[RMDB]
RNA sequence: GGGAACGACUCGAGUAGAGUCGAAAAGACUACCAGUUCGCUGGUAGUCAAAGGGAAACGGGAAGGCGGCGGCGUCCGCCCUAACAAACGCAAAAAGAAAAAAAAGACGAAGCUUCGGCUUCGUCAAGUACGAUCAUUAGUUCGCUAAUGAUCGUACAAAAGAAACAACAACAACAAC
Reactivity to DMS in 0.01 (KOAc 150mM, MgCl2 10mM, bicine 150mM(pH8.5), 24C), signal-to-noise 2, nucleotides 027 to 126: g000a020c000u010a010c000c000a000g000u000u030c190g030c040u000g010g010u000a000g020u000c000a000a070a150g010g000g030a040a040a030c070g000g000g000a190a160g010g010c010g000g010c030g010g010c000g000u010c000c010g020c010c000c130u000a010a190c090a000a000a000c010g000c030a020a110a070a080a160g020a030a050a000a090a050a140a140a130g000a010c000g000a020a000g000c000u000u000c130g060g020c000u000u000c000g000u000c000a010a040
Reactivity to 2A3 in 0.01 (KOAc 150mM, MgCl2 10mM, bicine 150mM(pH8.5), 24C), signal-to-noise 3, nucleotides 027 to 126: g000a000c000u000a000c010c000a020g010u020u060c150g040c080u000g010g000u000a010g000u010c010a030a000a000g040g000g020a080a050a020c080g010g010g040a120a080g010g030c020g000g010c020g040g000c000g130u270c000c010g000c000c010c000u020a010a000c000a020a010a000c010g000c070a010a040a020a040a040g130a110a040a030a010a000a000a010a020g000a000c000g000a000a000g000c010u080u160c270g100g010c010u000u000c000g020u000c000a000a000